[RMDB]
RNA sequence: GGGAACGACUCGAGUAGAGUCGAAAAUGAAGUUCAGACAUUUGAAAACAUUAUAUCCUGAUAUUGAAUUUGUAGACCUUGAGGAGCAAUAUCGAUUAUCUAUGGUAGAAGCAAAGAAACGUCGUGAACCUCAUGCACCAUUCGUGGUGCAUGAGGUAAAAGAAACAACAACAACAAC
Reactivity to 2A3 in 0.01 (KOAc 150mM, MgCl2 10mM, bicine 150mM(pH8.5), 24C), signal-to-noise 1, nucleotides 027 to 126: u020g010a100a100g060u060u020c020a040g020a180c110a240u090u120u150g040a030a030a000a060c050a000u060u070a070u020a020u070c000c020u000g050a020u000a110u070u100g020a080a120u060u030u080g070u030a060g030a070c000c000u070u110g140a140g060g000a000g060c010a000a000u000a020u050c010g010a000u080u000a010u170c030u080a090u100g010g000u020a060g020a150a000g020c020a000a180a040g030a080a130a020c000g090u100c020g010u070g050a030
Reactivity to DMS in 0.01 (KOAc 150mM, MgCl2 10mM, bicine 150mM(pH8.5), 24C), signal-to-noise 2, nucleotides 027 to 126: u000g010a180a040g030u000u000c010a050g020a110c110a060u030u000u020g000a100a120a100a110c010a040u000u000a050u000a070u030c010c060u000g010a060u020a030u000u000g020a050a300u020u010u000g000u000a090g060a110c020c030u010u000g020a090g000g030a150g000c020a030a030u000a120u000c040g010a020u020u000a020u010c020u000a060u010g020g010u000a020g010a070a120g010c040a050a040a110g000a070a040a080c250g000u000c000g000u030g010a050